[RMDB]
RNA sequence: GGGAACGACUCGAGUAGAGUCGAAAAGAGAAGUGACCAUAGGUAGACUGUGGACAGUGAUCAUCGAUGUUGCUGGCAGUGGAGCUCCUCUGCUCUGACAUUCUCUGUGUCCAGCACCUGCUUCAGGCCUGCGGAUAGGGUUCGCCCUAUCCGCAGGAAAAGAAACAACAACAACAAC
Reactivity to 2A3 in 0.01 (KOAc 150mM, MgCl2 10mM, bicine 150mM(pH8.5), 24C), signal-to-noise 3, nucleotides 027 to 126: g090a000g000a120a030g060u150g070a100c050c020a050u190a040g000g060u060a050g060a300c040u070g090u100g120g000a020c020a040g050u040g060a110u110c050a040u090c110g110a080u120g020u070u090g060c070u090g000g030c050a030g000u130g100g040a080g010c080u040c060c020u000c000u080g000c000u010c070u070g020a030c010a060u080u080c070u010c020u010g060u050g080u050c020c000a010g000c050a020c000c000u100g030c060u100u040c040a010g040g050
Reactivity to DMS in 0.01 (KOAc 150mM, MgCl2 10mM, bicine 150mM(pH8.5), 24C), signal-to-noise 1, nucleotides 027 to 126: g000a080g000a070a160g000u020g000a170c070c020a010u000a090g000g000u000a000g080a050c050u030g060u030g000g000a160c010a000g000u000g000a150u000c030a050u000c160g040a030u080g010u000u000g040c100u030g020g080c040a110g000u020g000g000a200g110c160u090c030c000u000c060u000g020c020u030c140u010g140a000c000a100u000u000c090u000c000u000g000u020g000u000c030c260a050g080c060a090c000c050u000g010c100u000u000c060a120g000g040

The record gives the reactivity of an RNA of 177 nucleotides to 2A3 and DMS. It was measured as part of the RMDB library OK1LIB. High DMS reactivity at an A or C suggests that its Watson-Crick edge is free. The DMS profile rests on 941 reads. The 2A3 profile rests on 1,131 reads. DMS adducts were read by reverse transcription with MarathonRT. As a SHAPE reagent, 2A3 marks flexible, mostly unpaired nucleotides at the ribose 2'-OH.